[RMDB]
RNA sequence: GGGAACGACUCGAGUAGAGUCGAAAAGAUGGGUCCGAUGGAUUAAUGCGUCGCCCGCCAUUGGAUCCUGAUUGAUAGAUUGAUGGCGACGGUCGGAUCACUCGGUAAUUCGGUGCUCCACGAGUGAUCCGUGAUGAUAGUUAAGACGAGCACCUAAACGAGUAUGCUGAUUCGUCAGCAUACUCGUAAAAGAAACAACAACAACAAC
Reactivity to 2A3 in 0.01 (KOAc 150mM, MgCl2 10mM, bicine 150mM(pH8.5), 24C), signal-to-noise 2, nucleotides 027 to 156: g110a090u150g010g000g020u020c000c000g000a010u000g000g030a050u050u230a200a020u300g050c000g010u020c000g000c000c000c000g010c000c000a030u000u000g000g020a000u000c000c000u060g040a130u060u120g060a030u020a130g140a050u020u170g030a060u080g000g000c000g000a000c000g000g000u020c010g000g010a000u000c000a000c000u000c010g000g060u120a080a150u240u300c050g000g000u000g000c000u010c000c020a000c000g000a000g000u000g010a000u000c000c000g000u020g050a020u060g010a020u040a120g210u210u130a030a000g040a010c020g000a000g020c000a020c000c000u000a020a060
An RNA of 207 nucleotides, treated with 2A3 and read out base by base. The reactions ran in a buffer of 150 mM KOAc, 10 mM MgCl2 and 150 mM bicine (pH 8.5), at 24 C.